[RMDB]
RNA sequence: GGGAACGACUCGAGUAGAGUCGAAAAGAUAAGUGAGCAUGGUGUGUGCUUAACAGGCAUCCAGGUAAACUAAAUGUGCAUAAGGCCUGAGAGCACAGGAUGGGAACGGAGUGGAGGUUCACAUUCCCCUUCAUCAAUGAUUCGUCAUUGAUGAAGGAAAAGAAACAACAACAACAAC
Reactivity to 2A3 in 0.01 (KOAc 150mM, MgCl2 10mM, bicine 150mM(pH8.5), 24C), signal-to-noise 9, nucleotides 027 to 126: g050a060u140a090a060g020u020g040a020g010c060a080u070g010g070u080g030u010g010u010g050c000u080u040a180a040c010a020g000g000c010a030u070c080c030a050g060g080u130a100a050a030c030u070a110a120a150u240g030u080g020c030a060u040a230a060g070g000c010c000u040g010a040g000a000g030c010a010c010a020g020g030a050u110g010g000g030a080a090c080g020g030a070g020u090g010g070a050g010g020u040u030c020a020c000a050u050u060c020c000
Reactivity to DMS in 0.01 (KOAc 150mM, MgCl2 10mM, bicine 150mM(pH8.5), 24C), signal-to-noise 9, nucleotides 027 to 126: g010a120u010a070a090g030u000g000a080g000c060a080u010g010g020u010g020u010g020u000g010c020u000u010a080a150c100a030g000g020c010a100u000c090c110a090g010g010u010a070a080a100c130u000a050a100a100u010g010u000g020c080a060u010a100a090g010g010c010c010u000g000a280g000a040g000c020a020c020a040g000g000a110u010g000g010g000a090a080c160g000g000a090g020u010g010g000a070g010g000u000u000c050a030c080a180u000u000c040c040